The data come from the RNA Mapping Database (RMDB), library RFM100. The record gives the reactivity of an RNA of 177 nucleotides to 2A3 and DMS.

[RMDB]
RNA sequence: GGGAACGACUCGAGUAGAGUCGAAAAGGACGCGCGGAGCCCCCGCCGUGGCCGGGACCGCGGGCUGGAACGCCCCCGCGCACCAGGAAUGUCUUGUAGGCGCCCGCCCCCACCGCGCGCCGGACGCCAUUAAGGCCGAAUUCGUUCGGCCUUAAUGAAAAGAAACAACAACAACAAC
Reactivity to 2A3 in 0.01 (KOAc 150mM, MgCl2 10mM, bicine 150mM(pH8.5), 24C), signal-to-noise 2, nucleotides 027 to 126: g000g010a060c010g010c000g010c010g010g030a030g030c000c050c020c000c000g060c020c040g050u080g060g080c060c060g040g020g020a080c030c020g020c040g000g030g010c040u060g020g050a070a040c040g030c000c000c110c010c000g000c000g010c000a050c020c000a010g070g080a170a110u170g040u080c030u100u190g080u250a100g000g040c000g010c000c000c040g020c020c000c000c020c000a030c000c030g000c000g030c000g000c000c000g000g010a000c040g050c040
Reactivity to DMS in 0.01 (KOAc 150mM, MgCl2 10mM, bicine 150mM(pH8.5), 24C), signal-to-noise 2, nucleotides 027 to 126: g030g010a080c060g030c060g010c020g020g020a220g000c070c120c070c030c030g000c020c090g060u000g030g000c060c110g030g020g000a120c110c100g000c060g030g000g050c010u060g020g020a150a130c180g000c130c060c040c050c060g030c000g000c030a030c030c030a050g000g020a160a070u020g000u000c130u000u040g000u020a160g020g010c020g000c110c050c070g010c090c000c000c070c040a180c190c010g030c110g020c020g000c020c020g000g000a030c060g010c090
Source information: The reactions ran in a buffer of 150 mM KOAc, 10 mM MgCl2 and 150 mM bicine (pH 8.5), at 24 C. For DMS the reverse transcriptase was MarathonRT. 2A3 adducts were read by reverse transcription with SuperScript II with manganese.